Structure probing data (2A3 and DMS) for a 177-nucleotide construct. High DMS reactivity at an A or C suggests that its Watson-Crick edge is free. The RNA was probed in 150 mM KOAc, 10 mM MgCl2 and 150 mM bicine (pH 8.5) at 24 C.
RNA sequence: GGGAACGACUCGAGUAGAGUCGAAAAGAUAUGGAUGUUCCUUCGCCGACUACCCACCUCGGAAACGAGAGGUCGGAACUACGAGUCAACAUCCUAAGUCAAAGGGGUGUGGUUCGCCACACCCCAACAAUGGAGCAAUCUUCGGAUUGCUCCAUUGAAAAGAAACAACAACAACAAC
Reactivity to 2A3 in 0.01 (KOAc 150mM, MgCl2 10mM, bicine 150mM(pH8.5), 24C), signal-to-noise 1, nucleotides 027 to 126: g080a060u200a130u230g010g000a030u000g020u000u010c050c000u030u050c020g060c000c020g070a010c010u140a200c060c070c040a040c020c020u000c010g000g000a130a060a010c040g000a010g030a020g000g000u020c010g040g070a000a010c100u300a050c010g000a010g020u090c060a010a030c000a010u040c000c000u020a190a050g150u210c100a140a080a110g020g010g010g010u000g000u000g000g000u050u130c260g000c060c030a000c010a000c030c000c000c030a000a000
Reactivity to DMS in 0.01 (KOAc 150mM, MgCl2 10mM, bicine 150mM(pH8.5), 24C), signal-to-noise 3, nucleotides 027 to 126: g000a090u000a200u010g000g010a010u000g010u000u000c110c030u020u000c030g010c010c010g000a050c010u010a060c100c020c060a300c180c000u010c000g000g010a110a130a180c000g000a010g000a060g020g000u000c020g020g010a080a050c160u000a290c030g000a020g000u000c080a010a020c040a010u000c000c000u000a040a100g010u000c060a100a120a140g010g010g000g020u000g020u000g000g010u010u000c230g030c000c000a010c000a020c010c000c000c000a010a000